Chemical mapping of a 177-nucleotide RNA with 2A3.
High 2A3 reactivity points to a flexible backbone, as in loops and unpaired stretches.
2A3 adducts were read by reverse transcription with SuperScript II with manganese.
Reactivities are given for positions 27 through 126.
The RNA was probed in 150 mM KOAc, 10 mM MgCl2 and 150 mM bicine (pH 8.5) at 24 C.
RNA sequence: GGGAACGACUCGAGUAGAGUCGAAAAAUCUAAAACGUGAUGUUUCAUUCCUUGAUCUUGUGCAAUUUGUUUUGCGACUUCAAUUUCAGUAUCAUGUCUUUGGCCAUAAUUAAACGUUACGAGUUCACUUCAUCGUGGUGUUCGCACCACGAUGAAGAAAAGAAACAACAACAACAAC
Reactivity to 2A3 in 0.01 (KOAc 150mM, MgCl2 10mM, bicine 150mM(pH8.5), 24C), signal-to-noise 2, nucleotides 027 to 126: a000u060c020u110a030a030a000a120c060g020u020g020a080u060g180u070u060u000c020a040u090u200c040c000u000u070g010a020u060c050u070u080g010u050g000c000a040a300u010u050u090g300u030u090u080u070g050c050g030a080c040u020u000c100a010a080u030u080u000c070a000g000u000a030u170c030a170u040g150u000c030u060u050u110g020g000c070c000a060u050a120a040u080u100a100a020a000c020g090u090u090a010c070g010a030g030u100u080c050a010